[RMDB]
RNA sequence: GGGAACGACUCGAGUAGAGUCGAAAACGUAUCGAUAUGCACGAUGGCGCCGCUGCGCAGCGAACGCUGGCCAUCGUUGCCGGCCUCCGGCUCCACCCCGUAGAUCCGGCAGGCCGGCGCCAGCGCACGUAGCCUAUCCUUUCGAGGAUAGGCUACGAAAAGAAACAACAACAACAAC
Reactivity to 2A3 in 0.01 (KOAc 150mM, MgCl2 10mM, bicine 150mM(pH8.5), 24C), signal-to-noise 2, nucleotides 027 to 126: c050g050u170a140u170c080g040a120u060a080u300g010c040a040c040g000a010u040g050g000c050g020c040c060g000c080u090g010c110g020c020a020g020c040g050a210a030c110g000c000u020g060g000c000c020a060u020c040g030u040u110g010c000c000g000g020c000c000u010c000c010g040g010c010u020c010c020a130c010c130c030c010g030u080a020g000a020u030c000c000g000g020c110a020g000g000c030c000g010g000c000g000c000c000a020g000c060g020c020a030
Reactivity to DMS in 0.01 (KOAc 150mM, MgCl2 10mM, bicine 150mM(pH8.5), 24C), signal-to-noise 2, nucleotides 027 to 126: c090g040u000a070u020c130g000a110u010a100u010g010c070a050c010g010a010u010g010g010c050g020c080c090g010c060u000g010c040g010c000a040g010c070g030a130a110c130g020c010u000g000g000c020c060a010u000c050g000u000u010g020c000c000g010g020c030c010u010c020c030g000g030c050u000c030c040a140c040c130c090c160g040u010a170g010a040u000c020c000g020g020c220a010g020g000c000c000g010g020c030g010c080c100a010g010c030g040c120a160

This 177-nucleotide RNA was probed chemically with 2A3 and DMS. For DMS, 1,874 sequencing reads were counted. For DMS the reverse transcriptase was MarathonRT. For 2A3, 1,574 sequencing reads were counted. Values cover nucleotides 27 to 126.